Structure probing data (DMS and 2A3) for a 177-nucleotide construct. The data come from the RNA Mapping Database (RMDB), library OK2TST. In probing experiments dimethyl sulfate is read out at A N1 and C N3, which are open when not base-paired. The DMS profile rests on 7,366 reads. Conditions: 150 mM KOAc, 10 mM MgCl2 and 150 mM bicine (pH 8.5), 24 C.
RNA sequence: GGGAACGACUCGAGUAGAGUCGAAAACGCGCAGCCUUUGCGACGCCGGCCGAAUUUAAGGUGGCAACACGAGUACCGAAGGAAGUAUUGGCGACAUUGCGUUCCACCGCGGAGAAUGUCAGCAGCAGAUUUAAUGACCUUUCGAGGUCAUUAAAUCAAAAGAAACAACAACAACAAC
Reactivity to DMS in 0.01 (KOAc 150mM, MgCl2 10mM, bicine 150mM(pH8.5), 24C), signal-to-noise 6, nucleotides 027 to 126: c100g010c040g000c070a070g020c070c050u000u000u000g020c030g020a090c120g000c050c030g030g020c020c030g020a110a100u010u000u000a080a100g010g020u010g000g020c090a070a080c060a050c060g000a060g010u000a070c040c020g010a070a090g010g000a070a090g010u010a100u010u000g010g010c040g010a050c050a060u000u000g000c050g010u000u000c020c030a090c140c080g010c090g010g000a100g010a070a050u000g000u000c020a090g010c040a080g000c150a110
Reactivity to 2A3 in 0.01 (KOAc 150mM, MgCl2 10mM, bicine 150mM(pH8.5), 24C), signal-to-noise 4, nucleotides 027 to 126: c050g000c020g000c030a020g040c020c030u070u140u120g000c030g050a050c060g000c000c000g110g010c010c020g060a100a120u120u110u100a180a030g040g010u010g020g020c020a050a020c040a020c060g040a040g030u030a060c010c020g020a070a040g040g040a070a030g070u090a130u110u130g050g020c020g000a010c020a050u040u120g070c000g030u070u020c010c010a100c040c040g000c050g010g090a080g040a060a060u060g020u070c030a030g030c010a010g030c000a010